An RNA of 207 nucleotides, treated with 2A3 and DMS and read out base by base. The DMS profile rests on 4,176 reads. 2A3 adducts were read by reverse transcription with SuperScript II with manganese. As a SHAPE reagent, 2A3 marks flexible, mostly unpaired nucleotides at the ribose 2'-OH. DMS adducts were read by reverse transcription with MarathonRT. Source: RMDB library RNAMAK, as collected in RNAgym.
RNA sequence: GGGAACGACUCGAGUAGAGUCGAAAACAUGAUUUCGAUCAUGGAGUCUCCUAAGUCUUGCUGAUAUCGAGCGACCCACCAAUGAUCGGAAACGAUCAUUGUUGGGUCGCUAAGACAGUAUCAAACAAGAUAUGGAUUCGGGAGCUUUCGAGCUCAACAUGUGGUGAUAUUUCGAUAUCACCACAUGAAAAGAAACAACAACAACAAC
Reactivity to 2A3 in 0.01 (KOAc 150mM, MgCl2 10mM, bicine 150mM(pH8.5), 24C), signal-to-noise 2, nucleotides 027 to 156: c000a000u020g010a050u140u190u170c300g030a020u010c000a000u010g050g020a010g110u010c020u050c050c000u070a200a100g010u000c000u000u000g030c010u020g000a010u020a030u240c060g000a000g050c000g010a000c050c000c000a000c050c000a010a000u000g000a010u000c030g020g050a080a080a050c020g000a000u000c010a010u000u000g010u010u000g000g000g000u020c000g040c000u010a020a000g000a000c020a000g050u020a000u010c010a020a040a040c000a000a000g010a010u030a110u100g020g000a050u150u100c080g090g090g040a000g020c020u100u070u130c210g140a010g000c020u040c020a020a040
Reactivity to DMS in 0.01 (KOAc 150mM, MgCl2 10mM, bicine 150mM(pH8.5), 24C), signal-to-noise 2, nucleotides 027 to 156: c030a050u000g000a040u000u010u020c210g010a070u000c010a030u000g010g010a200g010u020c060u010c020c040u020a120a190g020u000c010u000u000g030c040u000g010a030u000a010u000c050g040a030g030c010g010a020c000c000c010a050c040c000a020a010u000g000a030u010c010g000g010a150a160a230c000g040a020u000c000a010u000u000g020u010u000g010g010g020u010c000g000c010u000a010a050g010a220c300a060g010u000a000u000c010a020a040a020c000a020a030g020a030u010a200u000g000g000a230u000u000c060g010g020g000a050g010c020u010u010u010c230g020a100g020c010u000c000a050a300